[RMDB]
RNA sequence: GGGAACGACUCGAGUAGAGUCGAAAAGAUUAUGUGGGAGAUGCGCCCAGUCGUGUCACUGGAAACAGAAUUGCGAGUCGCUCGCUCUAGCGAUAUUGAUGUGUACCGUAGCGUACACUGUGCUACUUUAAGGUAUGAUGACGAUACCACGUCAAAAAUUAUACUAUGAGUUCGCUCAUAGUAUAAUAAAAGAAACAACAACAACAAC
Reactivity to DMS in 0.01 (KOAc 150mM, MgCl2 10mM, bicine 150mM(pH8.5), 24C), signal-to-noise 4, nucleotides 027 to 156: g030a160u000u000a060u010g020u000g020g020g020a130g010a110u000g000c050g020c120c040c040a140g020u000c040g000u010g020u000c050a100c020u020g010g010a130a120a220c060a050g010a060a090u000u010g000c030g010a080g050u000c040g030c010u000c060g000c090u000c070u000a080g010c010g030a060u010a070u010u000g010a070u010g000u000g010u000a020c030c020g000u000a090g010c060g010u000a040c010a030c020u000g010u010g010c030u000a070c070u000u010u000a090a090g020g020u000a050u000g010a080u000g010a070c040g000a100u000a070c020c020a080c020g020u000c020a020a040a070a100
Reactivity to 2A3 in 0.01 (KOAc 150mM, MgCl2 10mM, bicine 150mM(pH8.5), 24C), signal-to-noise 6, nucleotides 027 to 156: g040a020u130u110a070u200g050u080g010g020g000a070g010a040u060g020c020g010c010c030c030a010g030u090c050g020u060g050u100c020a010c050u030g010g050a070a080a030c040a030g100a140a120u130u160g020c010g020a040g060u050c020g010c050u010c010g020c030u070c050u080a010g000c010g030a030u020a080u120u150g110a100u120g020u000g000u010a010c020c060g130u120a030g030c040g090u000a010c010a010c020u020g070u060g010c020u020a060c010u090u100u110a080a040g030g000u070a050u120g110a080u060g020a010c010g000a000u010a040c000c030a020c040g030u000c000a050a030a000a000

Structure probing data (DMS and 2A3) for a 207-nucleotide construct. It was measured as part of the RMDB library OK3TST. Conditions: 150 mM KOAc, 10 mM MgCl2 and 150 mM bicine (pH 8.5), 24 C. As a SHAPE reagent, 2A3 marks flexible, mostly unpaired nucleotides at the ribose 2'-OH.